An RNA of 177 nucleotides, treated with 2A3 and DMS and read out base by base. 2A3 adducts were read by reverse transcription with SuperScript II with manganese. The data come from the RNA Mapping Database (RMDB), library RFM100. Conditions: 150 mM KOAc, 10 mM MgCl2 and 150 mM bicine (pH 8.5), 24 C.
RNA sequence: GGGAACGACUCGAGUAGAGUCGAAAACUGCCAAGCUCACUUUUAAUCAUGAGAAAGAAAUUACCCACAUGGAGUCAGCAGAAAAUGAGAAAGUAGAGCUCGUGCUGCGAAUAAUUCCAGCAAGUGCCAGGAGUGACCUAUUCGUAGGUCACUCCUGAAAAGAAACAACAACAACAAC
Reactivity to 2A3 in 0.01 (KOAc 150mM, MgCl2 10mM, bicine 150mM(pH8.5), 24C), signal-to-noise 3, nucleotides 027 to 126: c020u050g000c000c000a030a000g030c000u000c000a010c000u070u030u000u010a160a090u090c000a010u070g030a040g160a190a090a000g070a040a080a000u090u040a190c030c000c010a030c030a170u210g000g010a030g040u070c020a020g000c070a030g020a030a070a010a000u020g020a020g030a030a030a030g070u170a130g000a000g000c000u040c030g090u050g000c000u000g040c000g000a010a040u260a100a110u170u040c000c000a000g060c040a100a000g030u020g120c010
Reactivity to DMS in 0.01 (KOAc 150mM, MgCl2 10mM, bicine 150mM(pH8.5), 24C), signal-to-noise 2, nucleotides 027 to 126: c070u040g100c080c060a100a040g000c000u000c000a010c010u000u000u000u000a130a170u010c020a010u000g090a150g000a080a110a100g010a130a040a080u050u000a180c030c020c000a120c200a130u030g030g010a130g000u000c100a160g000c020a090g010a190a080a060a030u000g000a040g000a000a040a030g010u000a100g000a090g010c000u000c160g000u000g050c000u000g110c150g000a070a280u080a060a200u000u030c010c000a000g010c020a000a060g020u000g010c080